[RMDB]
RNA sequence: GGGAACGACUCGAGUAGAGUCGAAAAGAUGGGUGAAUUUUCAAUCUCCUCAUAUAUUGCUAUUAGACUAAAGGAUCAGUUUGAAACAAUAAGUAUAGGUUCAUAUGAUAUUACAGGUGCUAAGAUGUCCCUCUGAUGUUUUCGAACAUCAGAGGGAAAAAGAAACAACAACAACAAC
Reactivity to 2A3 in 0.01 (KOAc 150mM, MgCl2 10mM, bicine 150mM(pH8.5), 24C), signal-to-noise 2, nucleotides 027 to 126: g090a000u080g000g040g020u070g100a060a050u050u000u010u300c060a010a010u000c000u000c020c000u060c040a020u090a030u080a050u170u080g140c100u030a060u130u040a050g040a050c100u170a060a040a040g040g050a020u060c020a080g100u060u070u080g130a070a050a010c030a110a210u130a190a000g080u110a060u080a190g120g000u000u010c000a000u040a050u100g020a000u030a050u020u070a040c070a000g060g020u090g090c010u000a030a000g010a170u120g020
Reactivity to DMS in 0.01 (KOAc 150mM, MgCl2 10mM, bicine 150mM(pH8.5), 24C), signal-to-noise 2, nucleotides 027 to 126: g000a090u000g000g020g060u070g000a010a030u030u000u050u030c170a160a140u030c070u000c000c050u040c040a020u000a080u040a030u020u050g010c030u010a100u040u000a010g000a050c020u010a050a100a100g030g010a090u010c080a090g010u010u020u000g020a030a040a070c040a050a070u000a080a150g040u000a100u000a090g020g000u010u010c020a070u010a030u010g000a020u000a030u020u020a060c220a040g000g010u000g020c000u000a020a090g000a110u000g020